[RMDB]
RNA sequence: GGGAACGACUCGAGUAGAGUCGAAAAGAUAUGGAUCUCACAUGAUCAACAGCUGCCGGUCGGAAACGACCGUGCAGACAUGAUCAGUGAGAUCCUAAGUCAAAAGGCCUCGGUUCGCCGAGGCCAACGUGGUUAGUUACUUCGGUAACUAACCACGAAAAGAAACAACAACAACAAC
Reactivity to DMS in 0.01 (KOAc 150mM, MgCl2 10mM, bicine 150mM(pH8.5), 24C), signal-to-noise 1, nucleotides 027 to 126: g000a020u000a100u010g000g020a010u000c020u010c000a010c000a090u000g000a010u010c010a140a020c240a190g000c000u000g000c000c000g020g000u000c000g000g010a040a030a080c000g000a000c000c000g000u000g060c000a010g000a000c050a300u030g000a000u000c000a070g000u020g000a010g020a000u000c000c010u000a000a040g000u010c010a110a070a130a120g020g050c000c000u000c000g020g000u000u020c240g030c020c010g000a020g000g000c000c040a000a020
Reactivity to 2A3 in 0.01 (KOAc 150mM, MgCl2 10mM, bicine 150mM(pH8.5), 24C), signal-to-noise 1, nucleotides 027 to 126: g020a010u000a020u030g000g010a010u000c000u030c000a000c060a260u130g020a010u050c160a300a140c120a140g010c000u020g000c000c010g030g000u000c010g000g050a000a000a050c010g000a000c000c000g010u070g000c000a000g020a000c020a300u300g000a000u020c000a040g000u030g000a020g000a000u020c000c000u000a020a000g020u000c000a040a010a090a200g030g010c000c010u010c000g000g070u040u060c300g120c050c000g000a000g210g000c000c000a000a000
The data come from the RNA Mapping Database (RMDB), library TTRDES. This 177-nucleotide RNA was probed chemically with DMS and 2A3. The RNA was probed in 150 mM KOAc, 10 mM MgCl2 and 150 mM bicine (pH 8.5) at 24 C. For 2A3, 1,889 sequencing reads were counted.